RNA sequence: GGGAACGACUCGAGUAGAGUCGAAAAGAGCGAUUAGACAAAGGGGUAGAGCUACAUAUUAGAUAGUUGUAUAAUCGUUCAAGUUACAUCAAAACAUCUUCAAUAUUUAUUACUUACUUUCCUUUCUGCCAGAGUACGGUAUUCGUACCGUACUCAACAUGGUCUCGCCAUUCGUGGCGAGACCAUGAAAAGAAACAACAACAACAAC
Reactivity to 2A3 in 0.01 (KOAc 150mM, MgCl2 10mM, bicine 150mM(pH8.5), 24C), signal-to-noise 1, nucleotides 027 to 156: g020a000g000c000g000a000u000u010a000g040a050c020a010a090a010g130g010g010g000u100a020g010a000g010c020u040a010c030a110u280a150u180u120a070g130a130u050a080g000u030u060g000u010a010u010a040a000u010c000g000u000u000c000a030a000g040u010u120a070c050a020u300c110a030a040a090a000c010a060u040c090u100u060c060a130a200u140a210u160u160u100a100u070u090a050c000u030u000a010c000u060u230u130c040c010u030u130u120c020u020g100c030c030a060g000a000g000u000a000c000g010g000u000a010u040u050c140g010u000a000c000c000g000u000a000c000u000c000a000a000